RNA sequence: GGGAACGACUCGAGUAGAGUCGAAAAACAACACGCUUCGGCGUGUUGUCGACGGAGGAAGCUGAGGACCCGCUUGUGCCGCAGCAGGGAAGCGCAGCGUAAAUCAGAGGUGAUUCGUCACCUCUAAUAAGUAUUCAUGUUUCGACAUGAAUACUUAAAAAGAAACAACAACAACAAC
Reactivity to DMS in 0.01 (KOAc 150mM, MgCl2 10mM, bicine 150mM(pH8.5), 24C), signal-to-noise 9, nucleotides 027 to 126: a030c000a000a000c000a010c000g020c000u000u010c200g030g010c000g030u000g000u000u000g010u000c040g010a110c100g010g010a080g010g010a120a110g010c030u000g000a060g000g000a220c060c040c040g000c050u000u010g010u010g020c030c040g010c090a060g010c050a070g010g000g010a070a080g010c080g010c030a040g010c050g000u000a040a090a100u010c140a020g000a020g010g010u000g000a040u000u010c180g010u000c000a020c000c000u000c010u000a020a060
Reactivity to 2A3 in 0.01 (KOAc 150mM, MgCl2 10mM, bicine 150mM(pH8.5), 24C), signal-to-noise 7, nucleotides 027 to 126: a000c000a000a000c000a000c000g020c010u040u060c210g150g000c000g000u010g000u000u010g000u000c010g030a030c050g030g050a050g050g040a090a040g010c030u020g030a050g030g080a080c010c010c010g020c030u060u080g060u080g030c040c040g020c030a020g010c030a060g030g010g020a070a020g040c040g010c070a020g010c020g070u110a060a060a040u130c050a010g010a000g020g010u010g010a020u040u060c120g020u020c040a000c000c000u000c000u000a000a010
Structure probing data (DMS and 2A3) for a 177-nucleotide construct. Values cover nucleotides 27 to 126. It was measured as part of the RMDB library M2PK50. The 2A3 profile rests on 22,222 reads. For DMS the reverse transcriptase was MarathonRT.